Overview:
An RNA of 177 nucleotides, treated with DMS and 2A3 and read out base by base.

RNA sequence: GGGAACGACUCGAGUAGAGUCGAAAAGAAAGAUAGUUUUGAUGUCGCAGAUACUGCAUCAGGAACUGACUGGAUAAGACUCAGUCACCAUCAGUUCCUAAUGCAUUGCCUUCAGCAUCUAAACAAAUUACGAGAGAAGAUUCGUCUUCUCUCGUAAAAAAGAAACAACAACAACAAC
Reactivity to DMS in 0.01 (KOAc 150mM, MgCl2 10mM, bicine 150mM(pH8.5), 24C), signal-to-noise 7, nucleotides 027 to 126: g020a130a070a100g010a080u020a070g000u000u000u000u000g000a010u010g010u000c080g010c160a020g010a040u000a020c110u000g000c000a000u000c040a020g010g000a010a000c000u000g000a010c250u000g010g010a140u030a080a090g010a020c010u060c210a140g010u000c020a200c010c000a080u000c000a000g010u010u010c000c010u010a010a000u000g000c000a000u000u000g010c040c000u000u000c020a100g000c000a000u000c010u000a010a010a020c020a070a070a110
Reactivity to 2A3 in 0.01 (KOAc 150mM, MgCl2 10mM, bicine 150mM(pH8.5), 24C), signal-to-noise 9, nucleotides 027 to 126: g120a020a070a010g130a080u240a060g000u010u010u000u020g010a000u000g040u070c020g000c050a010g010a020u030a040c010u010g000c000a000u000c020a000g000g000a000a000c000u000g010a010c110u040g010g020a120u150a280a090g010a010c070u090c300a070g030u010c020a040c060c000a000u000c000a000g000u000u000c000c000u000a000a000u000g000c000a000u010u050g020c010c000u020u030c010a010g000c000a000u000c020u070a000a000a010c030a010a090a020
As a SHAPE reagent, 2A3 marks flexible, mostly unpaired nucleotides at the ribose 2'-OH.
DMS adducts were read by reverse transcription with MarathonRT.